RNA sequence: GGGAACGACUCGAGUAGAGUCGAAAAGAAUGAUCCUGUCACUCAGCUCCCACGUGAAUCAUUCAAGAGUUAAACAAGAGAAAUGGUUCCUGUCAGUGCAGGUGAUGAAAGAGAUCAUUACAACAUAACUGAAGGUCAAGACAAGGAUAAAUACCAACCAUAAUUAUCGCUUCGGCGAUAAUUAUGGAAAAGAAACAACAACAACAAC
Reactivity to 2A3 in 0.01 (KOAc 150mM, MgCl2 10mM, bicine 150mM(pH8.5), 24C), signal-to-noise 4, nucleotides 027 to 156: g110a010a020u020g000a000u020c000c020u000g010u020c000a010c030u120c030a060g000c000u030c040c050c010a040c040g070u160g040a010a020u010c010a000u060u050c060a080a050g070a050g120u190u240a150a160a070c090a100a040g080a030g050a130a050a030u020g020g000u010u000c000c000u040g030u060c050a020g000u010g070c060a020g000g050u010g010a020u020g050a030a110a080g090a020g000a030u020c000a010u010u030a070c040a110a030c020a090u170a160a060c020u080g080a080a020g090g010u060c050a030a030g050a060c010a030a050g050g000a040u100a130a090a010u120a070c020c000a030a030
Reactivity to DMS in 0.01 (KOAc 150mM, MgCl2 10mM, bicine 150mM(pH8.5), 24C), signal-to-noise 1, nucleotides 027 to 156: g040a040a030u000g010a040u000c020c040u000g000u000c030a030c030u030c070a140g040c070u000c000c010c030a080c080g030u030g010a000a030u000c020a070u000u050c000a130a230g020a250g020u070u000a110a020a240c120a170a060g010a100g000a040a010a080u000g030g000u000u000c010c050u000g020u000c040a030g010u000g010c070a150g010g020u010g020a090u000g020a070a200a090g020a220g000a030u000c000a010u000u000a040c040a080a080c100a160u000a040a220c020u000g000a060a050g040g020u000c070a020a070g000a180c060a030a080g000g030a130u000a030a050a070u000a120c020c010a030a300
Structure probing data (2A3 and DMS) for a 207-nucleotide construct. It was measured as part of the RMDB library OK3TST. DMS adducts were read by reverse transcription with MarathonRT. Reactivities are given for positions 27 through 156.